Background:
Structure probing data (DMS and 2A3) for a 177-nucleotide construct. For DMS, 2,205 sequencing reads were counted. The reactions ran in a buffer of 150 mM KOAc, 10 mM MgCl2 and 150 mM bicine (pH 8.5), at 24 C.
[RMDB]
RNA sequence: GGGAACGACUCGAGUAGAGUCGAAAAUGCAGCUGCAAGCAUGGGGUGGCACAGCCGGGAGGCUGUACUCUGUGGGCCUGGACUUGGCUGCCCUUGACACGCGCAUUGUGGUCAAGCUGCCCAUCACAAAUUGGUGACUGUUCGCAGUCACCAAUUUAAAAGAAACAACAACAACAAC
Reactivity to DMS in 0.01 (KOAc 150mM, MgCl2 10mM, bicine 150mM(pH8.5), 24C), signal-to-noise 2, nucleotides 027 to 126: u010g010c020a080g020c040u000g030c090a060a060g020c090a170u010g000g000g030g010u000g040g020c080a060c030a000g020c000c000g020g020g010a210g010g010c020u010g000u010a020c030u000c060u000g000u000g010g020g000c010c080u010g040g030a190c070u010u010g000g010c000u010g010c020c200c010u000u010g010a080c080a050c090g000c120g000c210a090u010u010g010u000g000g010u000c030a050a040g000c250u010g000c000c030c010a160u000c120a090c150
Reactivity to 2A3 in 0.01 (KOAc 150mM, MgCl2 10mM, bicine 150mM(pH8.5), 24C), signal-to-noise 1, nucleotides 027 to 126: u120g010c000a020g000c000u010g040c060a040a030g000c020a070u060g010g000g000g000u050g120g030c100a000c010a080g000c000c000g020g010g080a040g020g000c040u000g030u020a050c080u100c070u070g040u070g020g120g050c020c080u060g060g000a110c030u080u120g040g000c010u030g000c000c000c010u000u070g100a070c130a010c150g090c000g000c130a100u050u170g030u040g030g070u040c000a030a010g000c010u030g010c000c000c030a160u170c030a050c060